[RMDB]
RNA sequence: GGGAACGACUCGAGUAGAGUCGAAAAGAAGACGUGACGAAAAGUCACGAAAAAUAAUAAAGGCUAAUCGUCAAAGCCCUACACUGUAGAUAAAGACGACAAACGUGGUAGAGAUACCACGAAAAGACGUAUUACGUGACUUCGGUCACGUAAUACGAAAAGAAACAACAACAACAAC
Reactivity to DMS in 0.01 (KOAc 150mM, MgCl2 10mM, bicine 150mM(pH8.5), 24C), signal-to-noise 2, nucleotides 027 to 126: g000a100a070g050a240c000g000u020g000a010c000g000a070a080a030a140g000u000c000a000c020g030a000a110a020a080a030u040a040a120u050a060a110a070g020g010c000u000a030a160u000c050g000u010c000a100a060a080g020c010c000c010u000a020c030a210c170u020g000u000a020g000a010u000a000a100a080g000a000c000g010a020c210a110a140a140c020g010u000g010g000u000a010g040a100g000a220u000a000c000c000a000c000g000a020a000a050a050g000a190
Reactivity to 2A3 in 0.01 (KOAc 150mM, MgCl2 10mM, bicine 150mM(pH8.5), 24C), signal-to-noise 3, nucleotides 027 to 126: g130a050a010g090a030c000g000u010g010a000c040g070a090a110a040a100g000u020c000a000c000g050a010a020a000a020a010u180a030a000u140a040a140a000g000g000c000u000a060a060u040c000g000u000c010a120a050a000g020c000c000c000u010a010c240a090c130u300g030u010a000g000a000u040a020a100a020g000a000c010g000a000c020a010a060a000c020g000u010g020g000u000a000g000a010g010a100u020a010c000c000a000c000g000a000a030a000a000g050a000

Chemical mapping of a 177-nucleotide RNA with DMS and 2A3. Conditions: 150 mM KOAc, 10 mM MgCl2 and 150 mM bicine (pH 8.5), 24 C. DMS adducts were read by reverse transcription with MarathonRT. The 2A3 profile rests on 3,366 reads. It was measured as part of the RMDB library OK1LIB.